[RMDB]
RNA sequence: GGGAACGACUCGAGUAGAGUCGAAAAAUUAACCGCAUCGGGCAGGAAGCAGUAGACGAAAUCGAAUCAAACCAUAGUCGCCACCGCUGGACUGUCGAAGAGUGCAAGGCGAUCAAGGCAGAGUAUCAACAGAAACUUAAAGACCUGCGAAACAGCACUCCUAAAUAUACUUCGGUAUAUUUAGGAGAAAAGAAACAACAACAACAAC
Reactivity to DMS in 0.01 (KOAc 150mM, MgCl2 10mM, bicine 150mM(pH8.5), 24C), signal-to-noise 2, nucleotides 027 to 156: a220u010u000a060a130c050c000g000c010a110u000c090g040g040g050c040a060g060g010a150a060g060c010a030g000u010a070g070a100c020g010a030a180a250u000c100g040a120a100u030c110a080a090a110c050c060a150u010a080g030u000c040g000c020c000a110c030c050g000c020u000g020g040a110c010u000g060u000c070g010a090a120g010a090g010u000g000c030a040a130g030g000c050g010a070u000c050a110a170g050g040c040a030g000a130g030u000a040u000c050a020a110c070a110g000a110a130a110c100u000u020a050a090a270g000a090c040c000u000g050c040g000a140a100a050c040a170g000c050a160
Reactivity to 2A3 in 0.01 (KOAc 150mM, MgCl2 10mM, bicine 150mM(pH8.5), 24C), signal-to-noise 3, nucleotides 027 to 156: a000u140u070a060a030c010c000g020c030a050u060c070g030g040g040c030a010g000g030a060a010g040c020a000g020u120a030g030a050c040g040a050a060a070u110c100g060a090a050u150c100a080a070a060c040c010a040u050a070g040u050c010g030c040c010a030c020c050g000c020u030g020g120a050c030u060g020u090c010g020a030a010g050a010g050u030g000c030a060a050g010g000c010g010a010u040c070a040a040g030g000c030a000g020a030g080u080a060u130c040a010a090c010a040g170a150a040a040c030u130u180a300a090a000g010a090c020c050u080g030c040g040a080a080a010c050a020g080c060a010